[RMDB]
RNA sequence: GGGAACGACUCGAGUAGAGUCGAAAAGACAGGUCUUGUGCAAUUACAGGAAUGCUCAAACAAUGCUAACAUUACUCUUCCAAUUAUACGGAGAGGUGAAAUCUUAUCUGUUUGUGUCAGCACUCAUAGAACAUUUCUGGCCCUGAAUAGAGGAGAGGGAGGGAGUGAAGUUCGCUUCACUCCCUCCAAAAGAAACAACAACAACAAC
Reactivity to 2A3 in 0.01 (KOAc 150mM, MgCl2 10mM, bicine 150mM(pH8.5), 24C), signal-to-noise 1, nucleotides 027 to 156: g040a020c030a030g040g080u110c050u150u130g060u030g030c050a060a160u160u040a100c000a010g000g000a070a030u060g010c020u020c010a030a040a030c020a000a120u070g000c030u040a020a020c000a080u060u120a040c000u050c040u160u150c060c010a080a130u300u100a030u070a140c020g000g000a000g000a000g000g000u080g000a110a140a000u050c070u090u060a030u070c040u100g120u000u010u000g020u000g030u020c000a030g030c030a010c030u050c010a030u110a110g060a030a000c020a050u000u040u020c030u000g060g000c000c000c000u030g010a030a070u090a010g020a020g060g070a060g000a030g050
The record gives the reactivity of an RNA of 207 nucleotides to 2A3. The 2A3 profile rests on 489 reads. 2A3 adducts were read by reverse transcription with SuperScript II with manganese.